[RMDB]
RNA sequence: GGGAACGACUCGAGUAGAGUCGAAAACGAUUUAGCCCUUGCCAUUCGCUAGUAGUUAUCGUUUAAUAACAGUAUGUUAUUUAAACGGUGAUCUUCCUACAGAGGACUUUCACCUCAUAAGUCAAUGGCACUUGGGCAAAUUCGUUUGCCCAAGUGCAAAAGAAACAACAACAACAAC
Reactivity to 2A3 in 0.01 (KOAc 150mM, MgCl2 10mM, bicine 150mM(pH8.5), 24C), signal-to-noise 1, nucleotides 027 to 126: c000g000a000u010u030u130a020g060c000c000c000u000u020g020c020c020a020u020u040c040g010c030u050a030g040u000a010g010u100u030a020u040c010g000u020u000u000a010a010u020a020a000c020a030g300u300a160u220g020u140u010a040u050u210u100a010a000a020c000g030g000u010g000a040u000c110u120u020c020c000u020a040c070a090g010a000g040g040a130c060u170u230u110c160a080c000c020u050c020a010u080a200a000g030u050c030a000a040u050g050
Reactivity to DMS in 0.01 (KOAc 150mM, MgCl2 10mM, bicine 150mM(pH8.5), 24C), signal-to-noise 2, nucleotides 027 to 126: c020g020a010u000u000u000a200g000c010c070c030u010u010g040c000c000a000u000u000c250g030c070u010a070g000u010a030g010u010u000a030u000c010g010u000u020u000a010a000u000a000a020c000a240g020u040a110u000g020u000u000a020u000u020u020a030a030a000c010g000g000u020g000a020u040c070u000u000c230c040u000a110c270a180g010a090g010g010a160c170u000u000u000c180a080c030c030u010c000a120u020a120a020g000u000c240a010a030u000g000

The record gives the reactivity of an RNA of 177 nucleotides to 2A3 and DMS. For 2A3 the reverse transcriptase was SuperScript II with manganese. Reactivities are given for positions 27 through 126. Conditions: 150 mM KOAc, 10 mM MgCl2 and 150 mM bicine (pH 8.5), 24 C.